[RMDB]
RNA sequence: GGGAACGACUCGAGUAGAGUCGAAAACUGUAUCCAGGUAGACAUAGAUAUUCUAUAGUGUCUCCUAUGUUGUAAUUAGCAUCAGUCUCUACACUAUUCUUAAAUUUCAUAUUAAUGGGGCGUGACGGAAUAGUACAGUAUGAUAGAACACAUCCUACUGUGUGCGGAUGUUCGCAUCCGCACACAGAAAAGAAACAACAACAACAAC
Reactivity to 2A3 in 0.01 (KOAc 150mM, MgCl2 10mM, bicine 150mM(pH8.5), 24C), signal-to-noise 1, nucleotides 027 to 156: c100u120g030u170a240u090c060c050a100g000g030u160a000g090a010c010a030u060a010g140a030u230a080u220u210c170u130a070u120a070g020u020g020u080c010u000c000c000u030a060u070g000u010u000g050u120a150a300u160u140a140g000c010a000u030c030a060g050u030c020u000c010u030a000c000a010c030u080a080u090u080c060u070u070a120a150a130u070u240u140c000a060u070a090u260u180a040a220u160g000g000g000g000c140g020u010g000a020c060g020g000a050a000u020a030g000u030a030c030a010g030u030a050u150g080a060u090a170g170a070a000c000a000c000a090u100c010c000u070a020